[RMDB]
RNA sequence: GGGAACGACUCGAGUAGAGUCGAAAAUGUGCUUGGGGAGUGAAUGAUGGGUUCUGACCCCCAUGCACCCCUGUGGGCCCCUGGCAUCACUGGCCCCAUCCUUCACCCCUGCCAACCACGCUUGCCCGUUGUCUAGUUUAUUCGUAAACUAGACAACAAAAGAAACAACAACAACAAC
Reactivity to DMS in 0.01 (KOAc 150mM, MgCl2 10mM, bicine 150mM(pH8.5), 24C), signal-to-noise 5, nucleotides 027 to 126: u030g010u000g010c180u000u000g000g000g000g000a080g010u000g000a020a020u000g000a050u010g010g010g000u010u010c030u010g010a220c080c040c030c010c020a030u010g010c060a090c030c030c000c050u010g020u020g000g000g010c030c040c070c090u020g000g000c060a060u020c050a070c090u010g010g010c230c010c020c020a030u000c010c040u000u000c030a030c020c030c010c020u010g010c030c010a040a060c100c030a040c030g010c100u000u010g000c000c010c030
Reactivity to 2A3 in 0.01 (KOAc 150mM, MgCl2 10mM, bicine 150mM(pH8.5), 24C), signal-to-noise 9, nucleotides 027 to 126: u120g000u020g010c020u030u040g010g000g010g010a160g040u030g020a020a030u040g080a070u060g030g060g020u070u020c020u050g140a120c000c000c000c000c010a010u050g010c010a090c000c010c000c010u060g030u140g020g020g000c010c000c010c050u040g040g000c020a060u050c020a030c050u030g030g000c000c010c000c000a010u020c000c010u020u030c010a030c000c010c000c010u040g080c030c010a010a010c020c010a020c010g020c020u030u110g030c000c000c010